[RMDB]
Chemical mapping of a 177-nucleotide RNA with 2A3.
Values are in units of 0.01, from 0 to 300, in steps of 10.
Conditions: 150 mM KOAc, 10 mM MgCl2 and 150 mM bicine (pH 8.5), 24 C.
RNA sequence: GGGAACGACUCGAGUAGAGUCGAAAACUCAAGGAACGAUAAGUGAGGGUAGUACUGCUAACACCAUUUGUGAUUUAUCACACUCCGCACCGCUGCUUCCUUGUGGAGUUGGUCGGUGCAAUUUCUGGAAUGCCGCUGCAUUCGUGCAGCGGCAUUCAAAAGAAACAACAACAACAAC
Reactivity to 2A3 in 0.01 (KOAc 150mM, MgCl2 10mM, bicine 150mM(pH8.5), 24C), signal-to-noise 2, nucleotides 027 to 126: c000u000c000a020a010g000g000a050a100c030g140a170u000a140a050g020u040g150a200g050g060g000u060a020g120u020a100c040u080g000c000u000a070a060c020a180c000c020a050u090u090u240g060u020g090a110u000u100u070a090u120c000a000c000a000c140u200c110c130g000c000a010c000c000g000c000u000g000c000u000u020c000c000u010u260g060u300g120g000a000g000u300u300g080g000u270c030g000g000u000g040c000a000a000u000u010u000c030u030g020